[RMDB]
RNA sequence: GGGAACGACUCGAGUAGAGUCGAAAACGUGAGACAUUAUUUAACCACGUUAAAGUAUAAUAAUAUAAGUUAGGUAUGCCCUUAUAAAGACUUAGGUAACGCUAAGGACUAUAUUAUUAUACUUCUUUCUGCCAUAACUAUUCGUAGUUAUGGCAGAAAAAGAAACAACAACAACAAC
Reactivity to 2A3 in 0.01 (KOAc 150mM, MgCl2 10mM, bicine 150mM(pH8.5), 24C), signal-to-noise 4, nucleotides 027 to 126: c000g010u010g010a210g100a030c100a160u050u130a150u190u300u150a090a070c030c000a010c000g000u010u090a090a060a010g000u010a000u000a000a000u010a000a010u000a000u020a130a140g000u000u000a010g050g000u010a060u300g020c010c000c000u010u000a000u000a010a010a010g010a010c000u000u000a000g000g010u010a020a000c000g000c060u000a000a010g000g010a000c000u000a010u000a000u020u000a000u000u000a000u000a010c000u000u030c000u000u020